[RMDB]
RNA sequence: GGGAACGACUCGAGUAGAGUCGAAAAUGAUCGAGAGAUCUAAUUAUGUACGCGAGUCAAGUGCACAGACUCGAGCGAAAGCUCGGUCGAAAGACCGCGUACAUGUUCCGGCAAGUGUACAGUCGAAGAGCAUGAGGAGGUUCGCCUCCUCAUGCUCAAAAGAAACAACAACAACAAC
Reactivity to DMS in 0.01 (KOAc 150mM, MgCl2 10mM, bicine 150mM(pH8.5), 24C), signal-to-noise 1, nucleotides 027 to 126: u000g000a000u000c000g000a240g000a160g010a030u000c000u000a060a200u000u000a010u000g010u000a000c010g020c010g000a070g010u000c010a120a190g050u000g010c050a020c050a180g000a000c000u000c060g030a000g000c000g000a150a090a140g000c000u000c000g000g000u000c000g000a070a000a100g000a030c000c000g010c010g000u000a000c010a000u000g000u000u000c050c010g020g000c080a070a110g050u000g060u000a000c010a250g000u000c130g000a060a140